[RMDB]
This 207-nucleotide RNA was probed chemically with 2A3. For 2A3 the reverse transcriptase was SuperScript II with manganese. Values cover nucleotides 27 to 156.
RNA sequence: GGGAACGACUCGAGUAGAGUCGAAAAAGCCACCGCUACGGCGGUGGCAAGUAGAAAAGUUGGUGCUUAGACCACGCCCUCUACCAUAAUAAUAGAUAAAUAGGCGAGUAUCAGUACGCUGAUACAAAAAACACUCACACGUUCGCGUGUGAGUGAACGACAUAGGGAUGUUCGCAUCCCUAUGUCGAAAAGAAACAACAACAACAAC
Reactivity to 2A3 in 0.01 (KOAc 150mM, MgCl2 10mM, bicine 150mM(pH8.5), 24C), signal-to-noise 1, nucleotides 027 to 156: a000g010c000c000a000c000c030g030c030u050a000c210g180g000c000g020g000u000g020g000c000a020a000g000u000a000g060a100a090a000a030g040u100u010g000g000u090g060c130u180u240a070g050a110c020c000a000c010g040c000c000c000u000c000u020a020c010c040a020u130a210a080u120a060a000u040a300g140a030u120a060a180a020u110a060g020g030c130g040a080g010u000a000u000c000a000g000u060a030c230g010c050u020g000a010u030a050c080a000a160a000a000a000a000c000a000c000u000c000a000c000a010c000g040u110u150c140g010c000g100u010g000u020g030a000g000u000g000a020a050